Chemical mapping of a 177-nucleotide RNA with 2A3 and DMS. Conditions: 150 mM KOAc, 10 mM MgCl2 and 150 mM bicine (pH 8.5), 24 C. High 2A3 reactivity points to a flexible backbone, as in loops and unpaired stretches.
RNA sequence: GGGAACGACUCGAGUAGAGUCGAAAAUUAUGAACUGGAGAAAGGCUACAAAGUGAGAUAUACUCCAUUGGCUCCAGGAUCUUACUUUGCUUCUGUCAAGUACAAUGGAAUCCAUGCUCCGGGAUCAUAAUUAUAUGCCGUUCGCGGCAUAUAAUUAAAAAGAAACAACAACAACAAC
Reactivity to 2A3 in 0.01 (KOAc 150mM, MgCl2 10mM, bicine 150mM(pH8.5), 24C), signal-to-noise 1, nucleotides 027 to 126: u020u030a000u050g000a020a000c010u010g060g030a000g000a040a210a160g130g040c080u130a000c270a120a230a040g150u190g220a130g050a030u100a030u030a210c040u060c000c000a000u030u020g010g000c000u050c000c000a010g010g010a000u000c040u000u120a140c050u250u300u070g000c040u040u000c030u050g000u030c030a000a010g030u050a300c000a040a000u000g000g010a030a000u100c000c010a100u130g010c000u040c010c020g020g000g000a060u090c000a030
Reactivity to DMS in 0.01 (KOAc 150mM, MgCl2 10mM, bicine 150mM(pH8.5), 24C), signal-to-noise 3, nucleotides 027 to 126: u000u000a030u000g000a040a120c020u000g030g000a030g000a150a090a180g020g020c060u010a090c110a060a060a170g010u010g010a050g010a150u000a110u000a120c140u010c010c000a050u010u000g010g000c010u000c070c030a040g000g000a010u000c020u000u010a070c180u000u000u000g010c120u000u010c030u010g000u000c230a050a050g030u010a060c070a010a000u000g010g010a020a050u000c020c010a080u010g000c010u000c010c000g010g000g010a160u000c010a010